This 177-nucleotide RNA was probed chemically with 2A3 and DMS. 2A3 adducts were read by reverse transcription with SuperScript II with manganese. For DMS the reverse transcriptase was MarathonRT. Values cover nucleotides 27 to 126. The reactions ran in a buffer of 150 mM KOAc, 10 mM MgCl2 and 150 mM bicine (pH 8.5), at 24 C.
[RMDB]
RNA sequence: GGGAACGACUCGAGUAGAGUCGAAAACGUGUUCUACAGGAAUCUAACAAGCAGAAUCUGAUCCAAAAAGUUCGAGAAUCUUCAGAAGAACUCAUUCAUGGAAUUUGGAGUACUGCUUCUGAAACGACGUACCUAGUGAUUUCGAUCACUAGGUACGAAAAGAAACAACAACAACAAC
Reactivity to 2A3 in 0.01 (KOAc 150mM, MgCl2 10mM, bicine 150mM(pH8.5), 24C), signal-to-noise 3, nucleotides 027 to 126: c030g050u070g040u150u010c040u090a140c030a110g100g050a070a090u130c050u110a120a040c010a110a010g020c000a000g010a030a020u000c010u030g040a010u020c020c010a030a110a020a040a010g030u030u060c030g010a000g070a210a170u040c040u180u050c100a100g050a240a020g000a090a020c010u000c030a030u100u070c040a030u060g040g070a100a090u070u020u200g020g000a010g000u100a060c010u000g010c000u050u000c020u020g000a020a010a030c050g090a010
Reactivity to DMS in 0.01 (KOAc 150mM, MgCl2 10mM, bicine 150mM(pH8.5), 24C), signal-to-noise 3, nucleotides 027 to 126: c100g030u000g010u000u000c020u000a130c130a050g010g000a140a070u000c090u030a090a140c160a050a040g010c000a020g020a160a150u000c020u000g000a050u000c000c000a020a060a120a150a060g010u000u010c050g020a140g000a080a140u000c160u000u020c120a070g010a100a100g020a020a130c020u000c050a120u000u010c150a140u000g000g010a030a070u000u000u030g010g000a020g010u000a130c050u000g000c010u000u010c040u000g000a030a060a120c130g000a230